[RMDB]
RNA sequence: GGGAACGACUCGAGUAGAGUCGAAAAGGACUUAGGUUCGCCUAAGUCCAAAUAACGACUACAAGUACGGUAGACGAAGAUAACGUACAGUACAGAAGUACAAAAGGAGAGACUUCGGUCUCUCCAACAGUAAAGAGCGGUUCGCCGCUCUUUACUGAAAAGAAACAACAACAACAAC
Reactivity to 2A3 in 0.01 (KOAc 150mM, MgCl2 10mM, bicine 150mM(pH8.5), 24C), signal-to-noise 1, nucleotides 027 to 126: g000g020a020c010u020u000a020g030g000u050u030c210g070c050c000u010a010a000g000u030c000c000a010a000a000u000a010a000c000g120a030c010u040a030c030a130a160g050u000a020c020g000g060u040a010g040a150c090g130a080a050g060a200u190a190a000c020g000u020a020c050a040g010u020a000c000a040g190a300a080g170u020a000c020a060a110a000a040g020g000a000g010a000g000a010c020u020u010c260g020g020u000c020u000c000u010c000c000a010a000
Reactivity to DMS in 0.01 (KOAc 150mM, MgCl2 10mM, bicine 150mM(pH8.5), 24C), signal-to-noise 1, nucleotides 027 to 126: g010g020a040c020u010u010a000g010g000u000u000c260g020c040c000u000a010a000g030u020c000c050a000a040a090u030a120a160c180g050a140c040u010a010c040a080a060g010u000a000c070g010g000u000a040g020a130c020g040a170a050g000a110u010a110a220c020g000u000a000c030a250g000u010a030c010a040g060a060a130g010u000a040c030a050a030a090a040g000g010a000g020a050g000a010c000u000u000c100g030g000u010c000u000c000u000c000c000a000a000
An RNA of 177 nucleotides, treated with 2A3 and DMS and read out base by base. For DMS the reverse transcriptase was MarathonRT.